RNA sequence: GGGAACGACUCGAGUAGAGUCGAAAAACACUGAUGAGUAGAAUGGGUUAAUACUGCAUUUAUUGCUUUCCCUUGACCGAGAGGUCUGGGUAAUCCUUUAAUACUCAUCGUGCUGGGGAUUGAUUCUAGAGAGAUCACCAUUCGUGGUGAUCUCUCUAAAAGAAACAACAACAACAAC
Reactivity to 2A3 in 0.01 (KOAc 150mM, MgCl2 10mM, bicine 150mM(pH8.5), 24C), signal-to-noise 1, nucleotides 027 to 126: a000c020a020c050u150g030a000u000g000a000g000u000a000g060a030a020u060g000g000g060u020u020a040a020u100a300c070u010g000c000a020u130u080u290a210u300u180g040c020u020u100u160c010c000c000u010u280g000a000c000c000g030a000g030a000g020g000u000c000u010g000g000g000u000a030a060u030c010c000u140u170u040a010a020u000a000c010u000c000a000u000c000g000u000g010c020u080g000g010g060g040a130u160u020g000a000u090u090c000u010